[RMDB]
RNA sequence: GGGAACGACUCGAGUAGAGUCGAAAAAGUGGCCUUACGAGGCCACAAAAGAAUAUAAGAAUGUAUCGAAUAAGUCUAUAUAAGUAGAAUCUACCAGGUGGUAGAAAAGCAGUGGUACGCCACUGCACUGCUCACAGAACUUCGGUUCUGUGAGCAGAAAAGAAACAACAACAACAAC
Reactivity to 2A3 in 0.01 (KOAc 150mM, MgCl2 10mM, bicine 150mM(pH8.5), 24C), signal-to-noise 1, nucleotides 027 to 126: a000g000u000g000g000c000c000u040u040a050c180g050a020g000g000c000c000a000c000a000a000a000a000g000a000a090u300a040u110a120a000g040a150a000u240g170u260a280u210c110g000a000a000u070a090a000g030u130c000u000a120u000a000u180a180a010g090u020a000g000a050a110u000c000u020a040c000c000a140g000g150u060g130g000u300a000g050a020a180a000a000g010c000a000g000u000g000g000u000a190c300g000c000c000a000c000u000g000c000a000
An RNA of 177 nucleotides, treated with 2A3 and read out base by base. High 2A3 reactivity points to a flexible backbone, as in loops and unpaired stretches. For 2A3 the reverse transcriptase was SuperScript II with manganese. The data come from the RNA Mapping Database (RMDB), library RFM100. The 2A3 profile rests on 490 reads.